[RMDB]
RNA sequence: GGGAACGACUCGAGUAGAGUCGAAAAGAUAUGGAACAUGGAGGGAGGUGUAUUCGGAAACGAAUAUACACCAUCGAUCUCCCUGUUCCUAAGUCAAAAGUAAGGGAAGGUUCGCCUUCCCUUACAACCUUCCAUGAACCUUCGGGUUCAUGGAAGGAAAAGAAACAACAACAACAAC
Reactivity to DMS in 0.01 (KOAc 150mM, MgCl2 10mM, bicine 150mM(pH8.5), 24C), signal-to-noise 1, nucleotides 027 to 126: g020a030u010a090u000g000g000a000a010c010a000u010g010g000a010g040g050g020a040g060g080u000g000u000a010u000u010c050g000g000a030a010a090c010g040a020a000u000a220u010a230c020a060c020c040a230u000c300g000a020u010c000u010c000c000c010u010g020u010u010c000c000u010a020a050g000u040c010a050a050a100a150g000u000a000a010g000g000g000a030a000g010g020u010u000c300g040c000c000u010u000c000c000c000u000u030a000c000a050a170

The record gives the reactivity of an RNA of 177 nucleotides to DMS. Conditions: 150 mM KOAc, 10 mM MgCl2 and 150 mM bicine (pH 8.5), 24 C.